[RMDB]
RNA sequence: GGGAACGACUCGAGUAGAGUCGAAAAAUGAUUGGAGCCGAAUGGCCUAGAAAAUGCAUCCGUUCCGUCCUCGGAGAUGAUUGAGUAGCUGUCCCGGUCGGUGUCUCAGGUGGGACAUUGUUGGGUUACUAACUUAUUAGUUCGCUAAUAAGUUAGUAAAAGAAACAACAACAACAAC
Reactivity to DMS in 0.01 (KOAc 150mM, MgCl2 10mM, bicine 150mM(pH8.5), 24C), signal-to-noise 7, nucleotides 027 to 126: a090u010g010a130u010u000g010g010a130g020c030c030g010a090a090u000g020g010c030c040u000a070g000a060a060a080a070u010g020c040a080u000c030c060g000u000u000c030c030g010u000c050c060u000c060g010g000a090g010a050u000g010a090u000u000g000a100g020u010a090g010c060u000g000u000c010c010c020g010g010u010c050g010g000u000g010u000c030u000c030a170g010g020u010g010g010g000a030c050a060u000u000g010u000u000g010g000g000u000u000
Reactivity to 2A3 in 0.01 (KOAc 150mM, MgCl2 10mM, bicine 150mM(pH8.5), 24C), signal-to-noise 4, nucleotides 027 to 126: a000u090g010a040u070u150g070g020a050g030c030c030g110a150a170u220g030g000c010c010u030a050g110a060a140a010a010u120g030c010a030u000c030c020g010u050u040c020c010g040u040c020c030u030c030g040g020a070g010a060u080g020a040u060u120g040a040g070u070a020g000c060u060g030u040c000c010c020g020g020u070c020g000g050u020g010u000c010u010c020a100g080g130u170g030g000g020a010c020a020u020u030g030u010u020g030g000g000u020u020